[RMDB]
RNA sequence: GGGAACGACUCGAGUAGAGUCGAAAACGAUGGUCAGUGGCCGCGAAACCUGAUAAGCACGAGUCUCCUGGUAGGGAGUCGCGGCAUAUGGAUCGGGUUGAUAGUACCCCUGCUGCAUCGGGGCCGAACUAGCCGAUGAUUUCGAUCAUCGGCUAGUAAAAGAAACAACAACAACAAC
Reactivity to DMS in 0.01 (KOAc 150mM, MgCl2 10mM, bicine 150mM(pH8.5), 24C), signal-to-noise 2, nucleotides 027 to 126: c050g020a070u000g010g020u000c000a080g020u000g020g030c090c050g030c050g000a080a040a020c000c000u000g000a070u000a080a100g030c080a140c030g010a050g010u010c020u000c030c000u000g010g050u020a200g010g010g000a040g010u000c010g010c010g010g010c020a050u010a070u000g020g000a040u000c060g000g000g010u000u010g000a170u000a090g020u010a150c020c000c020c020u000g010c040u000g010c050a060u010c040g010g000g020g010c050c020g000a080
Reactivity to 2A3 in 0.01 (KOAc 150mM, MgCl2 10mM, bicine 150mM(pH8.5), 24C), signal-to-noise 1, nucleotides 027 to 126: c010g000a020u030g010g060u070c010a000g040u000g190g000c060c040g010c060g050a030a080a060c000c000u030g010a070u010a150a040g150c100a030c300g010a010g060u030c010u060c010c010u030g170g180u180a100g090g000g000a010g000u010c000g000c060g050g000c020a000u060a030u050g090g030a020u000c000g010g020g010u020u010g120a100u090a090g020u090a100c020c010c040c030u030g000c030u080g000c010a030u050c000g000g000g010g040c000c030g000a020
Description
This 177-nucleotide RNA was probed chemically with DMS and 2A3. The RNA was probed in 150 mM KOAc, 10 mM MgCl2 and 150 mM bicine (pH 8.5) at 24 C. 2A3 adducts were read by reverse transcription with SuperScript II with manganese. The 2A3 profile rests on 1,108 reads. DMS adducts were read by reverse transcription with MarathonRT.